[RMDB]
RNA sequence: GGGAACGACUCGAGUAGAGUCGAAAACAGUUUGUUCGCAAACUGAAAAAGCGUACUACCCUAGACAUGCCUAUUUCCUCUUGAGUCCCAAAUAGGACAAUGAUGGAGGGUAGAGGCAACAGCUAGGGUAUCGCAAAAAGCAGCUUUCGAGCUGCAACUGGUUCGGAUUAUUCGUAAUCCGAACCAGAAAAGAAACAACAACAACAAC
Reactivity to 2A3 in 0.01 (KOAc 150mM, MgCl2 10mM, bicine 150mM(pH8.5), 24C), signal-to-noise 1, nucleotides 027 to 156: c000a000g000u000u000u000g100u070u070c110g080c210a000a000a030c000u020g140a020a020a060a120a000g010c010g010u030a080c050u000a000c010c010c000u000a000g050a080c060a050u020g000c000c000u070a130u120u070u110c060c010u030c010u010u020g040a020g020u000c020c020c050a280a300a100u300a130g040g000a010c030a040a300u080g000a070u110g010g000a000g000g000g000u020a040g000a030g050g010c000a010a010c020a030g020c000u010a000g000g070g000u000a000u000c000g000c000a020a020a020a020a020g000c000a000g020c000u100u110u150c240g140a000g000c010u000g010c000a000a000